The record gives the reactivity of an RNA of 207 nucleotides to DMS and 2A3. It was measured as part of the RMDB library OK3TST.

RNA sequence: GGGAACGACUCGAGUAGAGUCGAAAAAUCAGAGUUACAGUCCACACUUUUCAAUAUGUGCUUUCAUCUGGCGCACGAUCUCAUUCACAUCGCGAACCAUUAACUCGCUAUCGGAUAGCUUGCUAACAUCAACAUCAAACGAAUCCAGGCAGUCGGCCUUCCUCAUAUCCUUCGGGAUAUGAGGAAGAAAAGAAACAACAACAACAAC
Reactivity to DMS in 0.01 (KOAc 150mM, MgCl2 10mM, bicine 150mM(pH8.5), 24C), signal-to-noise 1, nucleotides 027 to 156: a050u010c020a080g000a060g040u000u000a020c090a130g020u000c040c030a020c030a120c050u000u000u000u000c060a150a130u010a060u000g050u010g020c010u000u000u010c120a060u010c070u000g010g000c070g040c030a050c080g010a100u000c060u000c080a060u010u010c110a110c060a040u000c100g010c040g020a110a080c020c010a130u010u000a020a040c020u010c040g020c090u000a060u000c180g000g060a300u000a100g020c060u000u000g020c040u000a060a110c140a090u010c030a060a100c060a070u010c060a030a080a150c090g010a070a040u000c010c000a060g060g000c010a130g010u020c030g000g010c090
Reactivity to 2A3 in 0.01 (KOAc 150mM, MgCl2 10mM, bicine 150mM(pH8.5), 24C), signal-to-noise 3, nucleotides 027 to 156: a000u090c040a030g020a020g050u100u070a070c050a010g070u050c050c000a020c000a020c050u100u090u110u180c090a120a100u140a090u200g050u050g010c010u070u050u090c040a170u070c050u050g050g000c020g000c020a020c040g030a060u020c030u020c030a080u160u060c040a050c030a080u040c060g000c010g060a040a020c030c010a090u080u160a090a080c030u010c070g000c020u020a030u100c040g030g030a030u020a040g030c020u020u030g010c030u060a050a060c020a080u130c060a010a090c000a030u130c090a050a020a050c040g120a030a050u050c040c000a000g070g030c010a000g100u070c020g060g000c010
For DMS the reverse transcriptase was MarathonRT.